[RMDB]
An RNA of 177 nucleotides, treated with DMS and 2A3 and read out base by base. The 2A3 profile rests on 4,578 reads. Source: RMDB library M2PK90, as collected in RNAgym. The RNA was probed in 150 mM KOAc, 10 mM MgCl2 and 150 mM bicine (pH 8.5) at 24 C.

RNA sequence: GGGAACGACUCGAGUAGAGUCGAAAAUUAAUCCUCCCGGGAGAGCCGCUAAGGGGGAAACUCUAUGCGGUACUGCCUGAUAGGGUGCUUGCGUGUGCCCCGGGAGGUCUCGUAGAGCCGUCGUAAAAUCAUUAUUACACUUCGGUGUAAUAAUGAUAAAAGAAACAACAACAACAAC
Reactivity to DMS in 0.01 (KOAc 150mM, MgCl2 10mM, bicine 150mM(pH8.5), 24C), signal-to-noise 4, nucleotides 027 to 126: u010u000a110a120u010c000c000u000c000c000c010g010g020g010a040g000a300g000c000c010g010c030u000a120a120g010g000g000g000g000a130a100a100c010u000c000u000a300u010g000c010g000g010u000a010c020u000g010c000c000u000g010a100u000a140g000g000g020u000g010c010u000u000g020c110g010u000g010u000g000c020c000c000c000g000g010g010a020g010g000u000c000u000c010g010u000a130g010a050g010c050c040g010u000c050g010u010a070a110a120
Reactivity to 2A3 in 0.01 (KOAc 150mM, MgCl2 10mM, bicine 150mM(pH8.5), 24C), signal-to-noise 3, nucleotides 027 to 126: u050u020a060a090u100c000c000u000c000c000c000g000g010g000a040g000a000g010c030c040g010c100u090a130a150g050g010g010g030g040a050a020a000c000u010c010u010a020u120g000c010g040g010u020a030c010u020g010c000c000u030g030a030u020a030g010g010g000u000g020c010u080u130g030c020g050u130g020u030g030c000c000c000c000g000g010g010a000g000g000u010c000u010c000g030u060a040g010a030g120c030c040g070u090c040g040u120a020a080a040